Chemical mapping of a 177-nucleotide RNA with DMS and 2A3.
As a SHAPE reagent, 2A3 marks flexible, mostly unpaired nucleotides at the ribose 2'-OH.
For DMS, 5,766 sequencing reads were counted.
The reactions ran in a buffer of 150 mM KOAc, 10 mM MgCl2 and 150 mM bicine (pH 8.5), at 24 C.
Reactivities are given for positions 27 through 126.
Reactivities are rounded to 0.1 and cut off at 0 and 3.
It was measured as part of the RMDB library OK1LIB.
RNA sequence: GGGAACGACUCGAGUAGAGUCGAAAAUGCGCAGUCGGGGUUGGAACAGCCCGGGAGACAGACGGGGUGGGCGAGAGAACGACGAAGUUGCCUUGGGAAAGCCGCUGUGCGCUGAAUGCGGCGAUGCACGCCCCGUUAUAUUCGUAUAACGGGGCGUAAAAGAAACAACAACAACAAC
Reactivity to DMS in 0.01 (KOAc 150mM, MgCl2 10mM, bicine 150mM(pH8.5), 24C), signal-to-noise 3, nucleotides 027 to 126: u050g020c000g040c040a070g030u020c070g000g030g000g000u000u000g020g000a070a130c140a070g010c040c010c010g040g000g000a140g000a130c200a130g000a160c070g010g000g010g000u020g000g000g000c070g020a100g020a060g010a080a080c030g010a040c110g000a040a110g030u010u000g010c120c050u000u010g000g000g010a110a110a190g030c000c020g010c030u000g000u020g010c060g010c020u020g000a120a100u010g010c030g000g030c000g010a040u020g000c120
Reactivity to 2A3 in 0.01 (KOAc 150mM, MgCl2 10mM, bicine 150mM(pH8.5), 24C), signal-to-noise 2, nucleotides 027 to 126: u070g000c000g000c030a060g040u090c000g040g000g030g060u100u070g080g050a060a060c010a020g000c000c020c000g000g010g000a130g060a060c090a030g070a060c050g020g000g030g060u110g000g000g050c100g000a060g000a000g030a060a020c020g120a010c050g050a070a040g020u060u080g050c030c000u100u080g080g000g000a000a130a050g010c000c000g000c010u000g050u090g080c020g000c030u070g060a010a040u180g010c020g000g040c030g000a030u080g070c050